[RMDB]
RNA sequence: GGGAACGACUCGAGUAGAGUCGAAAAGUAAUAGAUACCUGGAUGACGAGAAAGGGUGCGCUGAUAUCCAGGACGAAUGCUAGCAGUAAAUAGAAUAGCGCUCCUAAUACAACUAGCAACAAAAGGAUAAGGUAUCGUGAUGUCAAUCACAUUGCGAGAGCUGCAUAAUGUUCGCAUUAUGCAGCUCAAAAGAAACAACAACAACAAC
Reactivity to 2A3 in 0.01 (KOAc 150mM, MgCl2 10mM, bicine 150mM(pH8.5), 24C), signal-to-noise 3, nucleotides 027 to 156: g060u090a020a110u060a150g080a070u170a200c000c000u000g020g010a030u040g020a030c070g020a020g130a110a070a040g030g020g010u060g000c020g010c010u030g040a040u040a050u090c020c000a010g010g000a000c050g040a070a030u150g000c020u030a010g000c030a020g060u140a050a110a170u110a080g100a080a080u050a030g060c040g020c000u000c000c000u010a060a000u080a010c010a060a020c010u060a010g000c000a020a020c030a050a100a050a000g040g020a050u040a120a070g080g020u060a030u110c010g000u010g010a010u020g020u020c030a020a040u100c010a020c000a040u000u020g020c020g020a060
Reactivity to DMS in 0.01 (KOAc 150mM, MgCl2 10mM, bicine 150mM(pH8.5), 24C), signal-to-noise 1, nucleotides 027 to 156: g010u000a030a170u000a070g000a210u010a100c000c000u000g000g000a030u000g020a240c150g020a130g020a090a150a150g000g010g050u000g020c000g000c050u000g030a120u010a080u000c060c050a070g000g030a160c110g000a090a090u010g020c010u000a040g040c010a140g020u000a070a120a180u010a070g010a050a040u010a070g020c030g020c020u020c010c010u000a100a150u000a020c060a050a000c030u000a010g010c000a030a090c120a070a020a040a060g000g040a120u000a050a080g060g000u020a130u000c010g060u000g000a010u000g000u000c020a150a210u010c120a070c030a030u000u010g000c000g010a060
Structure probing data (2A3 and DMS) for a 207-nucleotide construct.